[RMDB]
RNA sequence: GGGAACGACUCGAGUAGAGUCGAAAACAGCAAAAAGGAACCGAUUCCCACCAAGUUCGGAAAGAGAUACCGGGCGAGGCGCUGAAGAAAGAAUCUCGCUUCAGACACCCCAACGACUCGACUGAAGAAUGCACGCCAUCGUUCGCGAUGGCGUGAACAUUAACAGUCGGUUCGCCGACUGUUAAUGAAAAGAAACAACAACAACAAC
Reactivity to 2A3 in 0.01 (KOAc 150mM, MgCl2 10mM, bicine 150mM(pH8.5), 24C), signal-to-noise 2, nucleotides 027 to 156: c020a050g050c070a020a090a090a100a060g090g070a100a050c060c020g050a080u040u030c000c010c000a030c060c040a080a020g030u010u030c040g040g040a100a120a020g070a020g000a010u070a200c060c000g000g020g010c010g010a000g050g060c100g030c030u010g020a050a050g050a020a130a040g090a060a140u030c030u020c170g020c030u020u000c010a040g020a050c000a100c000c050c000c010a070a080c030g070a070c000u010c030g020a030c040u000g020a040a010g060a070a060u080g060c000a000c000g010c000c000a000u000c010g050u070u060c150g040c020g080a000u000g000g000c000g000u000g000a000a000